[RMDB]
RNA sequence: GGGAACGACUCGAGUAGAGUCGAAAAGAGCUUCGGCGUCUUUCCAGACGCUCACGACGAUCUUUUCCUUCAAAUUCGACCCAAGUCCGCACUGCUUGCAGUGCAAAUACAAUUGCCAACGGAAGGACUUUCCGGUACACUUCGGUGUACCGGAAAGAAAAGAAACAACAACAACAAC
Reactivity to 2A3 in 0.01 (KOAc 150mM, MgCl2 10mM, bicine 150mM(pH8.5), 24C), signal-to-noise 4, nucleotides 027 to 126: g020a010g000c040u060u060c040g010g000c010g000u010c000u110u200u060c040c000a020g000a010c000g010c040u080c020a040c040g070a000c040g060a080u000c010u020u020u030u010c000c000u040u050c050a080a080a130u130u030c060g020a060c000c010c000a030a000g050u030c060c120g000c000a000c000u010g020c030u090u240g010c000a030g000u010g010c000a000a000a000u110a000c020a000a210u080u160g050c030c010a110a020c050g040g020a050a010g040g000a010
Reactivity to DMS in 0.01 (KOAc 150mM, MgCl2 10mM, bicine 150mM(pH8.5), 24C), signal-to-noise 2, nucleotides 027 to 126: g000a090g020c020u000u000c080g010g000c000g000u010c000u000u040u000c260c160a060g010a000c040g000c070u040c230a300c100g000a020c120g000a060u000c000u000u000u040u000c000c020u000u000c100a070a090a160u040u000c000g020a110c000c040c080a160a000g000u070c150c150g010c110a000c000u000g000c020u000u070g010c070a010g000u000g020c020a100a010a090u020a240c110a180a060u030u020g000c040c170a070a080c000g030g000a180a100g010g040a080